[RMDB]
RNA sequence: GGGAACGACUCGAGUAGAGUCGAAAACGGAGUAUUCGUACUCCGAUCAUGGGGUCCCUCUUGGACCUCGAAGUAGGCUUUGAUCCUGAAGCCUCCACGGGGGAGCCUACCGAGCUAGAGGGACGGAGGCACCCGGUAGUCUACAUUCGUGUAGAAACCGUAAAUGGGUGUUCGCACCCAUUUACGGAAAAGAAACAACAACAACAAC
Reactivity to 2A3 in 0.01 (KOAc 150mM, MgCl2 10mM, bicine 150mM(pH8.5), 24C), signal-to-noise 2, nucleotides 027 to 156: c020g010g000a000g010u020a030u110u140c170g020u140a060c010u010c010c000g000a060u110c040a170u280g120g000g000g000u000c020c030c000u000c000u040u150g030g050a180c050c030u010c000g010a220a030g000u000a000g000g030c010u050u090u200g100a190u300c000c000u000g000a050a020g000c000c000u000c010c000a050c010g000g000g040g000g010a010g000c000c000u020a020c040c030g000a000g000c010u000a000g000a000g020g010g000a000c020g010g000a010g000g010c000a030c030c000c010g030g030u150a110g030u000c000u010a010c000a040u070u160c210g040u080g000u040a010g010a120a100a050